Source information:
This 207-nucleotide RNA was probed chemically with 2A3. For 2A3 the reverse transcriptase was SuperScript II with manganese. The reactions ran in a buffer of 150 mM KOAc, 10 mM MgCl2 and 150 mM bicine (pH 8.5), at 24 C. 2A3 is a SHAPE reagent: it acylates the 2'-hydroxyl of flexible nucleotides of all four kinds. Reactivities are given for positions 27 through 156.
[RMDB]
RNA sequence: GGGAACGACUCGAGUAGAGUCGAAAAAGCCUGGUCGAUACGUCGACCAGGCAAUCCCGCCACAACGGCUUCCUGGCGUGGCGGAUCUCAUCCAAUGGAGCAACGCUCCGGAUACGUCCGGAGCGAAAAAAGCUCUGCUUCUUCGGAAGCAGAGCAACAGAGUUAGAAUCUUCGGAUUCUAACUCUGAAAAGAAACAACAACAACAAC
Reactivity to 2A3 in 0.01 (KOAc 150mM, MgCl2 10mM, bicine 150mM(pH8.5), 24C), signal-to-noise 1, nucleotides 027 to 156: a000g010c010c000u000g000g000u010c010g010a010u000a090c100g090u000c000g000a000c000c000a000g090g000c000a000a000u020c000c000c000g000c000c000a040c000a060a070c030g070g000c020u300u160c020c030u060g030g000c020g010u000g020g000c040g000g030a030u070c020u060c020a120u100c060c030a090a110u240g010g000a020g000c010a000a090c020g000c000u010c010c000g010g000a030u040a050c190g060u000c010c020g010g000a000g060c010g000a000a000a000a000a000a000g000c000u000c000u000g000c000u000u000c000u010u030c070g060g000a000a000g000c000a000g000a000g000c000a000a000